[RMDB]
RNA sequence: GGGAACGACUCGAGUAGAGUCGAAAACCUGACUGGAGGUUGGUGGCGGGGUAGAGCACUAAUUGGACGUUUAGGGAGGGAAACUUCUCGGCGUACUGUAAAACUCCGAACUCGUCACCGUCGUAGAACAAUUGGAGGUUUUCGAACCUCCAAUUGUAAAAGAAACAACAACAACAAC
Reactivity to DMS in 0.01 (KOAc 150mM, MgCl2 10mM, bicine 150mM(pH8.5), 24C), signal-to-noise 3, nucleotides 027 to 126: c000c000u020g020a110c120u000g020g000a130g010g000u020u020g000g030u020g000g010c040g000g010g010g000u000a090g000a050g000c080a070c180u000a120a060u030u010g010g000a040c060g010u000u020u040a240g000g010g000a050g000g000g010a090a080a090c030u000u000c010u000c000g010g000c020g000u020a000c020u010g000u010a050a070a120a140c010u000c050c050g000a120a190c030u010c030g000u000c020a020c040c000g010u000c050g000u000a070g000a110
Reactivity to 2A3 in 0.01 (KOAc 150mM, MgCl2 10mM, bicine 150mM(pH8.5), 24C), signal-to-noise 4, nucleotides 027 to 126: c000c000u050g120a150c040u070g110g090a040g110g010u170u240g000g000u040g000g030c050g020g020g020g000u080a020g010a000g030c070a020c070u060a070a070u090u080g040g020a000c040g010u010u070u190a090g000g000g000a020g040g000g010a020a030a010c020u060u000c010u000c010g000g000c010g000u090a100c000u000g050u070a030a050a060a100c020u000c060c010g020a070a030c010u000c000g010u000c000a010c000c000g000u000c000g000u050a060g050a070